[RMDB]
Structure probing data (DMS and 2A3) for a 177-nucleotide construct. The reactions ran in a buffer of 150 mM KOAc, 10 mM MgCl2 and 150 mM bicine (pH 8.5), at 24 C. 2A3 is a SHAPE reagent: it acylates the 2'-hydroxyl of flexible nucleotides of all four kinds. 2A3 adducts were read by reverse transcription with SuperScript II with manganese.
RNA sequence: GGGAACGACUCGAGUAGAGUCGAAAACUUUGAUGAGUACGACUAAGUGGUGCAUGGCCGUUCACAACAUGUGAGGUGACUUUUAGGUUUAUUGCUGUAAUGUGUGAGACCCUCAGCUACGGCGACUCUCACUCGAUAUAUUCGUAUAUCGAGUGAGAAAAGAAACAACAACAACAAC
Reactivity to DMS in 0.01 (KOAc 150mM, MgCl2 10mM, bicine 150mM(pH8.5), 24C), signal-to-noise 4, nucleotides 027 to 126: c040u020u010u010g020a050u010g010a080g010u010a050c070g000a070c080u000a080a080g010u010g020g010u000g000c080a050u000g000g010c010c030g030u000u000c030a060c080a040a070c090a090u040g020u010g010a060g020g020u000g010a060c070u000u010u020u020a090g010g010u000u000u010a060u010u010g030c010u010g030u020a070a080u000g000u010g030u020g010a090g010a100c050c010c020u000c070a070g010c040u010a020c050g020g010c050g000a070c140u000
Reactivity to 2A3 in 0.01 (KOAc 150mM, MgCl2 10mM, bicine 150mM(pH8.5), 24C), signal-to-noise 9, nucleotides 027 to 126: c030u070u050u180g100a100u090g010a040g050u050a020c030g050a030c080u060a110a050g040u020g080g020u030g020c020a040u020g060g000c020c010g060u060u050c040a040c020a160a090c040a090u140g040u030g070a020g020g030u060g030a050c030u040u070u080u180a070g010g050u060u080u100a090u070u130g030c010u010g040u110a090a100u090g040u010g020u010g030a040g030a080c020c010c000u020c020a020g010c020u020a010c030g030g000c010g050a040c010u000